Chemical mapping of a 207-nucleotide RNA with DMS and 2A3. The DMS profile rests on 2,637 reads. The 2A3 profile rests on 1,303 reads. For 2A3 the reverse transcriptase was SuperScript II with manganese. The RNA was probed in 150 mM KOAc, 10 mM MgCl2 and 150 mM bicine (pH 8.5) at 24 C.

[RMDB]
RNA sequence: GGGAACGACUCGAGUAGAGUCGAAAAUUGUUUUUGAUGCAUUGAGCUUCAUCGAUUAUAACACGGUACCAUUUAGAACGCUCUCCAAGGACAGGCAAUUGCUUAGCGAGGGGGUGACUCUCGCGCAGAGAAGGAUUCUCAUUUGCAAAUUGGUCAAUCGACGUAUUACUUUCGAGUAAUACGUCGAAAAAGAAACAACAACAACAAC
Reactivity to DMS in 0.01 (KOAc 150mM, MgCl2 10mM, bicine 150mM(pH8.5), 24C), signal-to-noise 2, nucleotides 027 to 156: u010u000g000u000u000u000u000u000g020a110u010g010c100a150u020u000g010a160g020c100u000u010c010a040u010c030g010a120u010u020a060u000a070a090c030a090c100g000g030u000a070c020c070a110u000u010u000a120g000a050a070c050g020c030u000c010u000c030c020a080a130g040g020a110c050a000g020g000c030a070a070u020u000g000c030u000u010a160g020c010g020a070g000g000g040g000g060u010g000a150c000u000c010u000c020g050c050g020c090a110g000a070g030a100a080g000g000a180u000u000c000u040c030a120u000u010u000g000c000a020a070a180u000u000g030g000u010c080a080a220
Reactivity to 2A3 in 0.01 (KOAc 150mM, MgCl2 10mM, bicine 150mM(pH8.5), 24C), signal-to-noise 3, nucleotides 027 to 156: u040u010g000u040u010u080u030u170g010a010u030g000c070a080u060u100g070a010g000c040u040u020c040a050u020c030g070a050u010u120a100u110a230a070c070a000c050g040g010u090a110c020c020a050u090u070u090a100g040a100a010c050g010c060u040c010u000c020c020a030a050g010g010a040c010a010g000g000c030a070a050u050u040g000c060u060u100a010g010c000g010a000g020g030g010g010g040u090g030a010c000u000c000u030c000g000c000g010c000a000g010a000g000a110a020g030g020a050u130u000c010u020c020a090u050u020u070g000c010a040a080a100u050u090g040g020u110c090a180a060